The record gives the reactivity of an RNA of 177 nucleotides to DMS and 2A3. The data come from the RNA Mapping Database (RMDB), library TTRDES. The RNA was probed in 150 mM KOAc, 10 mM MgCl2 and 150 mM bicine (pH 8.5) at 24 C. DMS (dimethyl sulfate) methylates the pairing face of unpaired adenines and cytosines. For DMS, 7,059 sequencing reads were counted. 2A3 adducts were read by reverse transcription with SuperScript II with manganese. DMS adducts were read by reverse transcription with MarathonRT.

RNA sequence: GGGAACGACUCGAGUAGAGUCGAAAAGAUAUGGAUCGGAUAGGACAUGAAGAAUGCUCGGAAACGAGCAUACUUCAACAGCCUAUUCGAUCCUAAGUCAAAAGUGUGCAGGUUCGCCUGCACACAACUAACUAUGAUCCUUCGGGAUCAUAGUUAGAAAAGAAACAACAACAACAAC
Reactivity to DMS in 0.01 (KOAc 150mM, MgCl2 10mM, bicine 150mM(pH8.5), 24C), signal-to-noise 4, nucleotides 027 to 126: g000a010u000a050u010g000g000a010u000c000g010g000a010u000a010g020g010a040c190a180u030g010a030a010g020a230a010u000g010c010u010c000g010g010a010a010a030c010g010a010g000c000a000u000a020c000u000u000c000a110a060c250a160g000c000c000u000a000u000u000c010g000a000u000c000c000u000a000a060g010u010c010a100a120a110a130g010u010g000u000g010c010a000g020g010u000u010c300g030c000c010u000g020c000a010c010a010c010a040a120
Reactivity to 2A3 in 0.01 (KOAc 150mM, MgCl2 10mM, bicine 150mM(pH8.5), 24C), signal-to-noise 3, nucleotides 027 to 126: g010a000u020a010u050g000g000a010u000c010g010g000a000u010a000g020g000a040c200a300u300g000a020a000g020a020a010u010g000c010u000c000g000g000a020a000a010c010g000a000g020c000a000u000a000c000u000u000c000a080a130c130a050g000c000c000u000a000u010u000c010g000a000u000c000c000u000a000a000g000u000c010a020a010a120a170g000u010g000u000g000c000a000g000g080u080u220c240g220c080c000u000g000c010a000c000a010c010a000a010